Source information
Chemical mapping of a 177-nucleotide RNA with 2A3 and DMS. Reactivities are rounded to 0.1 and cut off at 0 and 3. Values cover nucleotides 27 to 126. The 2A3 profile rests on 823 reads. 2A3 adducts were read by reverse transcription with SuperScript II with manganese. Conditions: 150 mM KOAc, 10 mM MgCl2 and 150 mM bicine (pH 8.5), 24 C. For DMS, 1,338 sequencing reads were counted.

[RMDB]
RNA sequence: GGGAACGACUCGAGUAGAGUCGAAAACGGGGCAUCGCCGAACCCCCUGUUGUGGAGUUCUGACCCUAUGGCCGGUCCACAACGAUGGCGCAAAACAUUAGUGCGAUGUCGCAAGCCAGACUAUGCAAUGCUCACAUAACUUCGGUUAUGUGAGCAUAAAAGAAACAACAACAACAAC
Reactivity to 2A3 in 0.01 (KOAc 150mM, MgCl2 10mM, bicine 150mM(pH8.5), 24C), signal-to-noise 1, nucleotides 027 to 126: c000g010g040g070g000c010a000u000c000g060c020c050g040a190a200c010c020c020c000c000u030g000u010u000g000u010g000g040a040g080u300u060c040u060g070a060c050c040c090u160a190u280g050g000c030c010g000g000u000c000c000a010c010a000a000c000g020a030u050g010g020c060g000c120a030a080a070a000c090a090u130u130a080g030u100g050c010g000a010u020g020u030c010g000c230a010a010g000c010c010a020g000a050c040u110a030u150g020c000a060
Reactivity to DMS in 0.01 (KOAc 150mM, MgCl2 10mM, bicine 150mM(pH8.5), 24C), signal-to-noise 2, nucleotides 027 to 126: c150g000g020g030g000c010a000u010c020g010c020c040g030a140a300c050c020c000c010c000u010g000u000u000g010u000g010g000a080g010u000u020c030u020g030a020c000c010c300u020a100u020g050g050c000c010g000g000u010c000c010a010c000a020a000c000g000a030u000g020g010c160g020c220a040a070a070a060c080a040u000u000a060g010u000g040c000g010a060u000g020u000c000g000c030a060a090g010c040c080a180g020a130c180u000a040u000g020c060a200